Structure probing data (DMS and 2A3) for a 177-nucleotide construct.
For 2A3, 75,017 sequencing reads were counted.
RNA sequence: GGGAACGACUCGAGUAGAGUCGAAAAGCUCUGCGAGACAGAUCGAACAACAAAGAGAGAUCGAAAAUCUUAGAGGAGAGAACGAAUCUGUCGACUUCACUAGGACAUUGUCAAUCAGAGGUCCAAAGACCAUUCAUGCGUUCGCGUAUGGAUGGUCAAAAGAAACAACAACAACAAC
Reactivity to DMS in 0.01 (KOAc 150mM, MgCl2 10mM, bicine 150mM(pH8.5), 24C), signal-to-noise 9, nucleotides 027 to 126: g010c000u000c010u000g010c020g000a300g010a000c010a070g010a020u000c010g000a300a210c050a060a130c260a080a170a090g000a060g010a300g000a020u010c030g010a110a080a120a180u000c000u000u000a010g010a060g000g000a020g010a130g000a140a020c010g010a110a100u030c110u040g010u000c010g000a290c010u000u000c000a080c020u000a000g000g010a010c090a100u020u010g000u010c010a000a210u000c010a010g010a020g000g000u030c010c010a050a090a080
Reactivity to 2A3 in 0.01 (KOAc 150mM, MgCl2 10mM, bicine 150mM(pH8.5), 24C), signal-to-noise 9, nucleotides 027 to 126: g030c000u000c000u000g010c020g010a050g000a020c010a010g010a010u010c010g060a070a060c040a060a030c050a030a300a010g100a020g010a000g000a020u010c020g050a060a040a020a060u000c010u010u010a010g000a030g030g010a010g000a010g030a060a030c020g020a060a140u140c120u160g100u040c030g060a140c000u010u010c000a000c030u010a000g000g010a000c020a110u060u120g010u010c000a000a010u020c000a010g010a010g020g030u000c000c000a030a030a010

Reactivities are given for positions 27 through 126.
For 2A3 the reverse transcriptase was SuperScript II with manganese.
Conditions: 150 mM KOAc, 10 mM MgCl2 and 150 mM bicine (pH 8.5), 24 C.